RNA sequence: GGGAACGACUCGAGUAGAGUCGAAAACAGAACUAAUUCGUUAGUUCUGGCAUAUAACCUUCACCAAUUAGGUUCAAAUUAGUGGUAAAAAUAAAAAUAAAACGGGGUCUGCAUUCGUGCAGACCAAUCAAAGAUCAUUGUUCGCAAUGAUCUUUGAAAAAGAAACAACAACAACAAC
Reactivity to DMS in 0.01 (KOAc 150mM, MgCl2 10mM, bicine 150mM(pH8.5), 24C), signal-to-noise 2, nucleotides 027 to 126: c000a000g010a030a010c000u010a010a030u010u010c210g000u000u000a010g010u000u000c000u000g000g020c210a090u010a100u020a100a060c010c020u010u000c030a050c020c020a010a050u000u000a040g010g000u000u020c210a090a010a050u020u000a050g040u000g000g000u010a020a030a080a090a100u030a040a110a080a090a070u010a040a010a080a110c130g020g010g010g000u000c000u000g040c010a070u000u020c130g020u000g020c000a010g000a000c010c010a010a040
Reactivity to 2A3 in 0.01 (KOAc 150mM, MgCl2 10mM, bicine 150mM(pH8.5), 24C), signal-to-noise 2, nucleotides 027 to 126: c000a000g000a000a000c010u000a030a040u070u200c150g040u040u000a000g000u000u000c000u040g000g030c030a130u260a020u030a100a040c000c000u050u060c030a030c050c010a040a050u040u080a070g100g020u170u210c090a050a120a130u070u070a040g060u030g060g000u120a020a010a030a070a120u220a050a120a050a030a050u200a050a080a070a030c030g260g020g020g000u000c000u020g000c000a000u030u080c160g030u040g000c000a000g000a000c000c000a000a000
Chemical mapping of a 177-nucleotide RNA with DMS and 2A3. For DMS the reverse transcriptase was MarathonRT. It was measured as part of the RMDB library M2PK50.